[RMDB]
RNA sequence: GGGAACGACUCGAGUAGAGUCGAAAAGCGGGGCUUGAAACGCGGGUAGCGCGCACGCCCGGCGAAGAAGUUCGCAUACGCAGUGUGCUGGUGCCGAAGUGUCUGCUGCAACGGCACGCUCGACACCUAGAACAUACCGUAUUCGUACGGUAUGUAACCUCCACACAAAGUUCGCUUUGUGUGGAGGAAAAGAAACAACAACAACAAC
Reactivity to 2A3 in 0.01 (KOAc 150mM, MgCl2 10mM, bicine 150mM(pH8.5), 24C), signal-to-noise 2, nucleotides 027 to 156: g000c030g000g020g010g020c010u010u070g050a140a110a040c070g000c040g020g090g080u130a070g080c010g030c000g000c030a020c010g000c000c010c000g030g000c000g000a030a010g030a040a010g070u040u120c040g020c060a030u050a090c040g010c230a080g020u020g010u010g040c000u010g010g020u000g000c000c040g050a070a020g080u070g050u080c060u060g030c040u020g000c060a050a060c040g010g000c000a000c010g020c040u010c000g000a010c020a010c010c010u020a040g000a090a000c000a010u000a000c000c020g000u000a010u010u080c120g040u040a000c000g010g010u000a000u000g000u000a000a010
Reactivity to DMS in 0.01 (KOAc 150mM, MgCl2 10mM, bicine 150mM(pH8.5), 24C), signal-to-noise 1, nucleotides 027 to 156: g020c030g010g000g050g040c010u040u000g010a090a070a100c010g020c010g080g010g060u000a180g010c000g000c010g000c070a120c210g050c030c000c000g020g000c030g010a040a250g000a090a190g000u000u000c030g020c010a170u000a190c040g000c070a030g010u000g030u010g000c020u010g070g020u000g080c030c040g060a070a060g010u030g000u010c010u050g000c030u020g000c200a140a160c090g000g020c000a000c000g000c040u000c010g010a050c000a050c000c030u000a170g010a130a080c000a050u000a010c000c010g050u000a040u000u000c300g000u010a050c010g000g000u000a000u000g010u000a000a050